Background: An RNA of 207 nucleotides, treated with 2A3 and DMS and read out base by base. 2A3 is a SHAPE reagent: it acylates the 2'-hydroxyl of flexible nucleotides of all four kinds. DMS adducts were read by reverse transcription with MarathonRT. For 2A3 the reverse transcriptase was SuperScript II with manganese. The RNA was probed in 150 mM KOAc, 10 mM MgCl2 and 150 mM bicine (pH 8.5) at 24 C. The data come from the RNA Mapping Database (RMDB), library OK3TST. For DMS, 2,818 sequencing reads were counted.
RNA sequence: GGGAACGACUCGAGUAGAGUCGAAAAUCUUCCAUGCAGUCAGGAAACACACCCCUUUCCGAAACAACUGCCUCGAGCUCACCUUGGGAGAGCAACUACCCGCCAUGUCUUUCCCCGACCCCGGCCUCCGACCCCAAAAUGUCUAUACCAUGUGGGAGGAUUUAUGAUAGUUCGCUAUCAUAAAUCCAAAAGAAACAACAACAACAAC
Reactivity to 2A3 in 0.01 (KOAc 150mM, MgCl2 10mM, bicine 150mM(pH8.5), 24C), signal-to-noise 3, nucleotides 027 to 156: u020c000u070u000c010c010a050u090g020c020a010g070u110c020a030g020g030a060a110a010c080a030c010a230c120c010c000c020u040u030u000c060c020g040a120a100a030c070a040a020c030u040g000c000c010u050c060g050a050g020c030u030c030a060c030c040u070u050g030g000g010a070g010a000g030c020a000a050c020u100a090c010c000c020g020c060c010a100u140g020u060c020u030u040u020c010c000c010c010g040a100c000c000c020c000g040g000c020c000u000c030c000g080a100c010c010c000c030a040a040a040a040u070g020u000c010u040a110u040a140c030c080a050u120g010u110g080g040g010a040
Reactivity to DMS in 0.01 (KOAc 150mM, MgCl2 10mM, bicine 150mM(pH8.5), 24C), signal-to-noise 2, nucleotides 027 to 156: u000c000u010u000c020c010a200u000g000c040a040g020u010c060a200g020g020a040a030a060c040a100c030a190c010c000c000c040u010u000u020c000c030g010a190a170a170c070a040a060c050u000g000c000c060u000c040g000a090g000c020u000c030a080c040c020u000u000g020g000g000a100g000a080g050c020a090a060c040u000a140c030c010c010g000c070c040a100u000g020u000c000u020u000u010c000c000c000c010g020a080c000c010c010c010g020g000c020c020u010c060c000g000a160c010c000c000c010a030a040a200a060u010g010u010c050u000a130u000a120c100c070a070u000g000u010g020g030g020a230